Overview
Chemical mapping of a 170-nucleotide RNA with DMS and 2A3. High DMS reactivity at an A or C suggests that its Watson-Crick edge is free.

RNA sequence: GGGAACGACUCGAGUAGAGUCGAAAAUGCAGGCGACAACUGCUAAUGUCAGUGCACUUAUGGGUGCUAAUGGCAACAAGAUUGUUGACAAAGAAGUUAAAGACAUGCAGUUUGAUUUGUAUGUCAAGAGGUUAUACCUUCGGGUAUAACAAAAGAAACAACAACAACAAC
Reactivity to DMS in 0.01 (KOAc 150mM, MgCl2 10mM, bicine 150mM(pH8.5), 24C), signal-to-noise 7, nucleotides 027 to 129: u030g030c000a030g020g020c080g020a090c100a070a010c000u000g050c000u030a150a060u000g030u000c010a060g030u020g010c020a000c030u010u010a100u070g070g030g000u000g030c000u020a060a050u030g040g020c020a000a140c150a060a100g020a160u000u000g010u010u070g020a040c130a050a110a070g010a080a100g020u010u010a010a070a130g030a040c030a040u030g000c010a000g030u000u050u040g000a120u000u000u000g010u010a000u060g000u050c030a080a070g010a150g020
Reactivity to 2A3 in 0.01 (KOAc 150mM, MgCl2 10mM, bicine 150mM(pH8.5), 24C), signal-to-noise 7, nucleotides 027 to 129: u070g000c010a000g060g020c020g060a050c110a100a030c000u030g010c050u080a090a070u060g020u020c010a010g030u020g060c000a000c010u110u180a150u300g200g040g020u000g010c010u040a120a180u020g000g000c020a020a020c020a050a040g050a090u050u050g030u020u010g000a020c040a020a150a010g120a080a030g060u130u250a100a010a010g010a010c000a010u020g000c010a000g010u050u120u100g160a150u030u060u000g010u010a040u010g030u000c010a010a010g070a050g080
Values cover nucleotides 27 to 129. For DMS the reverse transcriptase was MarathonRT. For DMS, 40,346 sequencing reads were counted. The data come from the RNA Mapping Database (RMDB), library 15KLIB.